[RMDB]
RNA sequence: GGGAACGACUCGAGUAGAGUCGAAAAGUUUUAACUUCUGUUUAUGGUGUGAGGUAGGGAGCCAUCUUCAUUAUUUUGCAUAUGAAUAUCCAAUUGUCCAGCACCAUUUGUUGAAGAGACUAUUCUUUUCCCAUUGAAUGGUCUUGGCACCCUUGUAAGGUAAAUAGCGAUUCGUCGCUAUUUACCUAAAAGAAACAACAACAACAAC
Reactivity to 2A3 in 0.01 (KOAc 150mM, MgCl2 10mM, bicine 150mM(pH8.5), 24C), signal-to-noise 2, nucleotides 027 to 156: g010u040u010u090u200a140a080c050u140u050c070u140g170u100u060u060a040u030g000g000u000g030u020g030a230g000g000u010a030g010g040g010a000g080c090c020a090u110c030u030u010c000a050u000u230a110u050u240u200u270g050c040a060u060a010u210g010a060a040u050a040u130c030c060a100a150u150u090g020u140c010c000a000g030c000a000c000c010a000u000u010u080g060u010u020g060a140a120g000a000g000a040c000u000a010u000u030c010u030u070u030u040c010c000c000a010u000u040g000a010a000u010g020g000u020c000u010u020g030g000c160a080c000c050c040u050u110g050u280a050
Reactivity to DMS in 0.01 (KOAc 150mM, MgCl2 10mM, bicine 150mM(pH8.5), 24C), signal-to-noise 2, nucleotides 027 to 156: g000u000u010u020u000a060a180c020u000u000c060u020g000u000u000u000a030u010g020g020u000g030u000g010a100g050g020u000a110g030g010g020a140g010c040c060a140u010c120u010u000c020a040u010u000a130u000u020u000u000g000c150a110u010a050u000g010a040a070u000a090u000c040c050a010a150u010u000g000u000c030c020a300g000c000a030c010c020a020u000u010u000g010u000u000g000a060a120g000a090g000a050c040u000a030u010u000c010u000u020u020u000c030c030c020a300u010u000g030a020a010u000g020g010u000c010u000u000g030g030c050a070c060c020c020u000u050g000u000a140